[RMDB]
RNA sequence: GGGAACGACUCGAGUAGAGUCGAAAAAAAAAAAGAUAUGGACGAGAGUGAGCUGAUGACCCAUGAGAUAGCUGUCGGAAACGACCGAAACAUGGCAAGGCUCCCUCUCGUCCUAAGUCAAAAAAAACAUUAGUAGUUUCUUCGGAAACUACUAAUGAAAAGAAACAACAACAACAAC
Reactivity to DMS in 0.01 (KOAc 150mM, MgCl2 10mM, bicine 150mM(pH8.5), 24C), signal-to-noise 1, nucleotides 027 to 126: a000a030a050a060a040a120a070g010a020u000a140u000g000g010a020c000g030a030g010a010g020u010g000a020g040c030u000g010a060u000g000a060c300c020c010a000u000g000a190g010a100u000a100g000c150u030g020u000c010g030g020a070a020a090c010g010a000c000c030g010a170a030a050c010a000u000g000g010c020a030a030g000g010c010u000c020c060c000u000c000u010c000g020u000c000c000u000a000a030g000u020c000a010a000a000a080a050a030a070a130
This 177-nucleotide RNA was probed chemically with DMS. The data come from the RNA Mapping Database (RMDB), library TTRDEL.